[RMDB]
RNA sequence: GGGAACGACUCGAGUAGAGUCGAAAAGAUAUGGAUCUCGGGUUUGAUUAUGGGACAUGCCUGAGGGAUCGGAAACGAUCUGGAGGGCAACAGCCCAUAAUCAAAUCUCUAGCGUGGAUCCUAAGUCCACGAAGUUUUACUUCGGUAAAACUUCGUGAAAAGAAACAACAACAACAAC
Reactivity to DMS in 0.01 (KOAc 150mM, MgCl2 10mM, bicine 150mM(pH8.5), 24C), signal-to-noise 2, nucleotides 027 to 126: g020a130u000a300u010g000g030a010u000c000u000c050g000g000g030u000u000u000g010a010u000u000a010u000g010g000g000a080c120a300u010g050c010c010u000g010a300g010g000g000a000u000c010g010g000a140a120a300c010g000a010u000c000u000g030g030a300g000g020g000c000a030a030c300a110g000c030c000c000a010u000a000a000u000c010a010a010a010u000c030u000c190u020a130g000c220g030u000g000g010a010u000c010c010u010a050a180g010u000c030